[RMDB]
Notes:
Source: RMDB library ARCHII, as collected in RNAgym. The record gives the reactivity of an RNA of 207 nucleotides to 2A3. The RNA was probed in 150 mM KOAc, 10 mM MgCl2 and 150 mM bicine (pH 8.5) at 24 C.
RNA sequence: GGGAACGACUCGAGUAGAGUCGAAAAGGGAGAUUGGCGGUGGACGAGCCACUCGCCAAUCGGGUCAGGUCCGGAAGGAAGCAGCCCUAACGAGGUCCGGAUCGGGUCGCUCGUCAGUCUCCUACCUGUUUUAAAUGUCCGUCUUUCGAGACGGACAGACUUUAGCUCUAUUCGUAGAGCUAAAGUCAAAAGAAACAACAACAACAAC
Reactivity to 2A3 in 0.01 (KOAc 150mM, MgCl2 10mM, bicine 150mM(pH8.5), 24C), signal-to-noise 2, nucleotides 027 to 156: g030g000g000a010g010a000u010u010g000g010c010g030g000u040g020g030a070c050g000a030g010c000c050a050c020u000c010g060c030c080a030a070u130c030g000g000g030u140c010a020g020g020u000c010c010g000g140a080a060g010g000a020a040g000c000a000g000c000c000c000u000a010a000c000g000a020g000g050u180c200c140g050g000a050u040c000g010g030g100u040c020g000c100u160c090g010u000c000a000g000u000c000u060c010c000u030a060c000c000u010g050u000u070u030u090a150a250a110u090g000u000c000c000g020u030c030u050u110u110c220g050a020g000a020c000g000g000a000c010a000